[RMDB]
RNA sequence: GGGAACGACUCGAGUAGAGUCGAAAAGGAGUGCGCAGUCCGGCAACAUCAGCAGAGAGCCCGCUAUACGUGACGGAUUGGCUGAAGCGUACAGAAAUAUUGAGCCUCCUGCAAGAGGCAGCCAAGCAAAACGUACGUGAGUUCGCUCACGUACGAACCUACAUUGAUCCUUCGGGAUCAAUGUAGGAAAAGAAACAACAACAACAAC
Reactivity to DMS in 0.01 (KOAc 150mM, MgCl2 10mM, bicine 150mM(pH8.5), 24C), signal-to-noise 1, nucleotides 027 to 156: g050g010a110g060u000g020c050g000c030a190g010u000c040c020g020g010c030a070a060c040a070u020c060a080g000c010a180g000a150g040a170g010c050c000c050g040c030u020a120u010a040c030g020u000g000a130c000g000g020a120u000u010g000g010c010u000g030a060a280g000c070g000u000a190c060a040g040a100a050a180u000a120u000u010g000a110g020c000c040u000c050c030u000g020c110a130a100g000a100g030g060c010a000g000c030c050a020a120g030c060a040a060a010a160c020g080u000a000c000g020u000g000a020g000u000u010c300g000c000u000c000a000c000g030u000a000c000g010a010a020
Reactivity to 2A3 in 0.01 (KOAc 150mM, MgCl2 10mM, bicine 150mM(pH8.5), 24C), signal-to-noise 2, nucleotides 027 to 156: g060g000a110g000u040g020c020g000c060a010g040u000c000c000g050g050c010a040a050c010a060u100c060a010g070c060a010g050a010g000a030g130c000c060c020g020c030u110a110u030a150c070g030u030g070a000c010g020g030a040u060u060g030g000c040u060g050a030a030g010c010g020u020a030c020a020g160a020a120a030u280a070u150u170g050a050g000c010c000u000c000c050u100g080c030a080a050g000a010g030g000c000a000g010c000c000a020a030g010c030a000a050a050a070c000g000u000a000c000g030u000g000a000g010u030u120c180g000c080u000c000a000c000g000u000a000c000g010a000a000